[RMDB]
RNA sequence: GGGAACGACUCGAGUAGAGUCGAAAAACCUAUGGAUUCGUCCAUAGGUGCUGGCGCGCGGCCUUUGUCCUGUCGCGUGUGCGUGGUGGGCGAUAUACCCGCAAUAGUGACAAUUCGUUGUCACUAACGUAAUCUUGCGUUUCGACGCAAGAUUACGAAAAGAAACAACAACAACAAC
Reactivity to DMS in 0.01 (KOAc 150mM, MgCl2 10mM, bicine 150mM(pH8.5), 24C), signal-to-noise 2, nucleotides 027 to 126: a030c010c000u000a010u010g000g000a040u000u020c200g000u010c000c010a010u000a010g000g010u000g000c120u010g010g000c030g030c030g010c040g010g000c020c110u000u000u020g010u010c120c120u000g000u010c020g030c000g010u000g000u000g040c080g010u000g010g040u000g000g010g000c040g000a140u010a100u010a120c000c010c030g000c070a130a150u000a000g010u010g000a010c000a020a020u000u000c260g020u000u000g000u000c000a000c000u000a020a070
Reactivity to 2A3 in 0.01 (KOAc 150mM, MgCl2 10mM, bicine 150mM(pH8.5), 24C), signal-to-noise 1, nucleotides 027 to 126: a000c000c000u000a000u010g000g020a000u020u090c160g040u030c040c000a000u000a010g000g000u020g080c020u090g100g020c020g000c000g030c040g000g050c000c000u150u140u140g070u030c010c020u010g020u040c010g000c030g000u010g020u040g100c020g000u050g000g030u080g000g000g000c050g020a050u040a020u030a230c000c000c000g000c040a050a020u030a040g000u000g000a000c010a010a000u020u100c280g050u050u020g000u000c000a010c020u000a120a010
The record gives the reactivity of an RNA of 177 nucleotides to DMS and 2A3. For 2A3, 1,875 sequencing reads were counted. The reactions ran in a buffer of 150 mM KOAc, 10 mM MgCl2 and 150 mM bicine (pH 8.5), at 24 C. For DMS the reverse transcriptase was MarathonRT. Reactivities are given for positions 27 through 126. Reactivities are rounded to 0.1 and cut off at 0 and 3. The DMS profile rests on 2,079 reads. Source: RMDB library M2PK50, as collected in RNAgym.